[RMDB]
RNA sequence: GGGAACGACUCGAGUAGAGUCGAAAAGAUAUGGAGCGAUCAACGAACUACAAGCUACCGUCGGAAACGACGGGUCUUGCGUUGAGUCGCUCCUAAGUCAAAACUUGGUUCGGUUCGCCGAACCAAGCAGGACAUCGAUGUUCGCAUCGAUGUCCUGAAAAGAAACAACAACAACAAC
Reactivity to DMS in 0.01 (KOAc 150mM, MgCl2 10mM, bicine 150mM(pH8.5), 24C), signal-to-noise 2, nucleotides 027 to 126: g000a040u000a300u000g020g000a020g040c000g000a140u000c000a000a030c010g010a090a000c080u000a300c030a030a020g000c060u000a300c020c000g010u000c000g010g000a120a140a230c020g030a000c000g000g000g000u020c000u000u000g000c030g000u020u000g000a020g020u000c000g000c020u020c010c000u000a010a050g000u000c080a100a050a140a240c000u000u000g000g010u000u000c000g040g060u000u010c300g010c000c000g000a010a010c000c000a010a000g020
Reactivity to 2A3 in 0.01 (KOAc 150mM, MgCl2 10mM, bicine 150mM(pH8.5), 24C), signal-to-noise 2, nucleotides 027 to 126: g030a010u070a030u260g000g000a030g030c000g000a000u040c000a020a010c020g080a070a100c160u190a090c300a000a020g080c000u300a300c060c000g000u000c000g000g030a050a070a070c010g000a000c000g000g030g100u050c010u020u020g030c020g000u000u010g040a060g040u030c010g000c000u000c010c010u000a000a000g000u010c000a000a020a140a160c010u020u000g030g000u010u000c000g000g120u080u060c300g070c120c020g000a000a010c000c000a000a010g060